RNA sequence: GGGAACGACUCGAGUAGAGUCGAAAAGACUACAGUGACGAGGUCGGCCGCCGGAAAAUGUUCUCUCUCCUUCGCGAGUCCCUAGCCGUGCCCGAGCUACCUGAAGAGUGCACCAAACUCACUGUCGAGACUUUGAGAUGUGUGUGCGGACCAGCGGUCUUAUGCCUUGAUUCGUCAAGGCAUAAGAAAAAGAAACAACAACAACAAC
Reactivity to DMS in 0.01 (KOAc 150mM, MgCl2 10mM, bicine 150mM(pH8.5), 24C), signal-to-noise 2, nucleotides 027 to 156: g000a130c040u000a090c000a060g010u010g050a050c050g020a160g030g010u000c030g010g000c030c030g040c040c010g000g000a090a070a060a100u000g000u000u010c030u010c040u010c010u010c020c040u010u000c060g000c060g010a140g020u010c020c010c040u000a080g030c010c030g020u000g010c020c010c030g020a140g030c000u000a060c060c030u000g000a090a110g010a110g030u000g030c020a050c050c010a080a090a150c030u000c010a040c010u000g000u000c100g010a170g010a090c030u000u020u010g010a090g030a220u000g030u000g020u010g000u000g010c010g020g000a070c060c020a040g010c050g060g020
Reactivity to 2A3 in 0.01 (KOAc 150mM, MgCl2 10mM, bicine 150mM(pH8.5), 24C), signal-to-noise 4, nucleotides 027 to 156: g050a020c050u080a070c080a060g040u040g040a040c050g060a030g030g050u050c020g010g030c030c010g010c030c010g100g040a040a060a040a070u140g040u080u020c030u010c000u000c010u030c010c020u100u080c040g020c040g050a020g040u040c040c010c000u020a030g010c030c020g060u070g010c010c020c020g010a010g010c010u060a080c010c010u030g020a090a030g070a020g070u040g010c020a010c040c010a080a120a120c000u000c010a010c000u020g060u120c100g080a070g060a180c030u030u050u060g030a040g010a100u080g060u010g000u000g020u010g060c010g010g010a040c020c020a020g020c030g070g000
The record gives the reactivity of an RNA of 207 nucleotides to DMS and 2A3.
2A3 adducts were read by reverse transcription with SuperScript II with manganese.
The data come from the RNA Mapping Database (RMDB), library OK3TST.
For DMS, 5,641 sequencing reads were counted.
Conditions: 150 mM KOAc, 10 mM MgCl2 and 150 mM bicine (pH 8.5), 24 C.